[RMDB]
RNA sequence: GGGAACGACUCGAGUAGAGUCGAAAAGAUAUGGACGUCCUAUUGUUAAUCACAAGGGAGUCAUGGAUUUCGGAAACGAAAUACAUGACAUCGAUCUUGUGAGUUAACAAUAGGACGUCCUAAGUCACUAUCACUCACGGUUCGCCGUGAGUGAUAGAAAAGAAACAACAACAACAAC
Reactivity to DMS in 0.01 (KOAc 150mM, MgCl2 10mM, bicine 150mM(pH8.5), 24C), signal-to-noise 1, nucleotides 027 to 126: g000a040u000a300u020g000g000a020c000g000u000c000c000u010a010u000u000g000u000u000a020a040u000c010a000c010a000a000g000g060g000a060g040u010c000a000u000g010g010a050u020u000u000c010g000g000a140a080a300c010g000a000a000a020u000a030c000a020u000g010a010c000a250u000c200g010a020u040c010u000u000g000u000g010a040g000u010u000a000a010c020a010a000u000a000g010g000a000c000g000u010c000c000u000a010a040g030u000c020a240